[RMDB]
RNA sequence: GGGAACGACUCGAGUAGAGUCGAAAAUCAAUCGCAGUGUUGGGUGAAAGUUGGAGGAUAAAUCCUCACCAAGAUUUAAAUUAAGCAAGAGAUAUAAGGCCGCUCCUUAUAUUGCGACUUGCUUAAAGAUAUCCGGCAAAGUUCGCUUUGCCGGAAACAAUUACUGUUUGUUCGCAAACAGUAAUUGAAAAGAAACAACAACAACAAC
Reactivity to DMS in 0.01 (KOAc 150mM, MgCl2 10mM, bicine 150mM(pH8.5), 24C), signal-to-noise 2, nucleotides 027 to 156: u000c030a070a150u000c060g000c100a110g000u000g030u000u000g000g030g020u000g000a050a040a110g000u000u000g000g000a150g010g050a160u000a050a100a130u000c020c020u000c020a050c050c040a080a080g000a170u000u000u000a060a130a250u000u000a030a050g000c000a000a030g000a300g000a040u010a010u000a000a000g000g020c050c300g010c300u010c050c000u000u020a020u000a030u000u000g020c050g010a160c020u000u010g000c010u000u000a010a040a070g010a220u000a090u000c000c010g050g020c020a020a020a030g000u000u020c300g000c000u000u000u000g000c030c030g000g000a000a000a060
Reactivity to 2A3 in 0.01 (KOAc 150mM, MgCl2 10mM, bicine 150mM(pH8.5), 24C), signal-to-noise 1, nucleotides 027 to 156: u050c010a000a080u070c060g040c060a050g120u000g060u110u100g060g000g020u140g100a220a090a120g050u130u110g030g010a010g000g000a020u180a150a170a050u020c010c000u000c010a060c030c000a050a050g020a060u090u150u220a020a110a130u040u030a000a010g000c000a010a010g020a000g000a000u010a010u010a020a000g010g000c040c060g070c110u250c000c010u020u000a010u010a010u040u080g060c050g110a080c010u000u000g010c000u000u010a000a000a020g050a020u100a020u030c000c010g000g030c000a000a000a000g000u000u080c040g010c090u000u000u010g000c000c000g000g000a000a000a000